This 177-nucleotide RNA was probed chemically with DMS. Source: RMDB library OK2TST, as collected in RNAgym. The DMS profile rests on 1,481 reads. The RNA was probed in 150 mM KOAc, 10 mM MgCl2 and 150 mM bicine (pH 8.5) at 24 C. Values cover nucleotides 27 to 126. For DMS the reverse transcriptase was MarathonRT.
RNA sequence: GGGAACGACUCGAGUAGAGUCGAAAAGACUGAGGUGGUGAUUGCACGCCAGUUUAUUGCGCGGUGUUAUGAGAGUGAUCCUCUGGUAGUGACAUUGCAGUAUCAGGACGAGGAUUAUGGCUAUGGAUAGCAGCUAGCAGUUCGCUGCUAGCUGCUAAAAAGAAACAACAACAACAAC
Reactivity to DMS in 0.01 (KOAc 150mM, MgCl2 10mM, bicine 150mM(pH8.5), 24C), signal-to-noise 1, nucleotides 027 to 126: g000a040c030u000g020a110g000g010u010g020g040u010g020a170u010u010g010c080a080c040g010c030c010a030g000u010u000u000a070u000u000g010c100g000c010g040g030u000g010u000u000a050u000g000a080g010a140g020u010g000a090u000c010c060u010c020u010g010g020u000a080g010u000g000a070c070a100u000u000g010c050a020g020u000a070u000c020a120g010g010a130c140g000a110g000g010a040u010u020a110u010g010g000c060u000a090u000g000g040a290